[RMDB]
RNA sequence: GGGAACGACUCGAGUAGAGUCGAAAAGAAAGCGCGAGGCUGCGAAGCGGUCGAGUCGUAUGAGGCCGGAAAUGCGACGACAGUGAGAUCCUGACCGGCCUAAGGAUCGAACUGGAGCGCGAAGAAAGGGAUAUACGUAGUUCGCUACGUAUAUCCCAAAAGAAACAACAACAACAAC
Reactivity to DMS in 0.01 (KOAc 150mM, MgCl2 10mM, bicine 150mM(pH8.5), 24C), signal-to-noise 4, nucleotides 027 to 126: g020a080a080a180g000c030g010c020g010a160g010g010c030u010g020c020g010a100a160g000c040g010g040u010c010g010a080g000u000c000g000u010a030u030g010a140g000g000c000c020g020g000a060a130a040u010g000c000g000a040c010g010a180c000a020g000u010g000a300g000a020u000c000c000u000g010a160c070c010g000g000c000c010u000a070a020g000g000a000u000c000g000a230a020c000u000g000g010a150g000c000g020c010g020a100a100g000a090a080a130
Reactivity to 2A3 in 0.01 (KOAc 150mM, MgCl2 10mM, bicine 150mM(pH8.5), 24C), signal-to-noise 4, nucleotides 027 to 126: g090a000a050a000g020c000g010c010g000a040g020g000c010u040g020c080g060a120a010g040c000g020g010u040c020g000a030g020u010c000g000u010a040u060g070a070g020g050c020c000g020g000a050a090a040u090g000c010g010a020c000g010a010c090a010g010u020g020a030g000a000u000c010c000u030g030a070c020c020g000g000c010c000u000a000a010g000g000a000u000c000g000a020a010c000u010g000g010a030g010c000g000c020g010a060a020g080a050a050a020